[RMDB]
Description
This 177-nucleotide RNA was probed chemically with 2A3 and DMS. For DMS the reverse transcriptase was MarathonRT. For 2A3 the reverse transcriptase was SuperScript II with manganese.
RNA sequence: GGGAACGACUCGAGUAGAGUCGAAAAUGUCAUCAGCAGGAUGGGCAAGCUGGAGCAGGUGGACGUGAACCUUUUCUGCCUGGUCGCCACAGACUUCUACAGACACCAGAUAGAGGAGGAGCUCGACGGAGCCUUAUGUAUUCGUACAUAAGGCUCCAAAAGAAACAACAACAACAAC
Reactivity to 2A3 in 0.01 (KOAc 150mM, MgCl2 10mM, bicine 150mM(pH8.5), 24C), signal-to-noise 2, nucleotides 027 to 126: u100g000u040c020a050u010c000a030g050c020a000g040g080a040u070g030g050g000c040a030a030g040c040u040g010g010a020g040c020a020g020g030u060g000g030a020c020g050u070g050a040a050c040c000u040u040u070u050c010u020g000c000c000u010g000g040u020c070g020c050c010a060c030a030g090a070c000u130u020c020u130a080c020a060g060a030c000a000c050c000a010g060a050u080a020g020a010g040g020a030g010g020a020g050c010u050c040g090a060c070
Reactivity to DMS in 0.01 (KOAc 150mM, MgCl2 10mM, bicine 150mM(pH8.5), 24C), signal-to-noise 4, nucleotides 027 to 126: u010g020u010c030a080u010c070a090g030c040a070g000g010a100u010g010g000g020c050a070a070g020c040u000g000g020a090g010c050a040g010g010u000g000g010a090c180g010u010g030a100a120c030c020u000u000u000u010c030u000g000c040c020u000g010g020u000c090g020c020c010a090c100a070g000a100c140u000u000c050u000a080c120a080g020a070c070a040c040c020a040g000a040u000a050g020a060g000g000a030g000g000a080g010c030u000c010g010a120c230